[RMDB]
Record summary:
An RNA of 177 nucleotides, treated with 2A3 and read out base by base. Values are in units of 0.01, from 0 to 300, in steps of 10.

RNA sequence: GGGAACGACUCGAGUAGAGUCGAAAAGCGUGCGCUUAUCGAUACGGCGCCGCCGUACCGCGCAAGCUGCGCCGGUACGGCAGUCGACGCGCCUGUGGCAGCCGCGGUCUCCGGACCCGCCACCGCACUCCCCUACGAGGUUCGCCUCGUAGGGGAGAAAAGAAACAACAACAACAAC
Reactivity to 2A3 in 0.01 (KOAc 150mM, MgCl2 10mM, bicine 150mM(pH8.5), 24C), signal-to-noise 1, nucleotides 027 to 126: g020c020g050u080g050c000g000c030u120u110a150u170c120g100a130u160a220c100g020g000c010g030c050c010g000c010c000g010u040a000c010c010g000c060g000c090a240a180g050c120u220g030c120g000c030c300g090g000u000a000c000g050g000c050a000g000u100c020g100a010c040g000c010g000c000c030u020g030u050g080g000c020a020g130c100c030g150c120g000g000u010c050u070c060c090g030g000a000c030c010c060g040c040c020a000c000c000g000c000a030
The reactions ran in a buffer of 150 mM KOAc, 10 mM MgCl2 and 150 mM bicine (pH 8.5), at 24 C. Values cover nucleotides 27 to 126.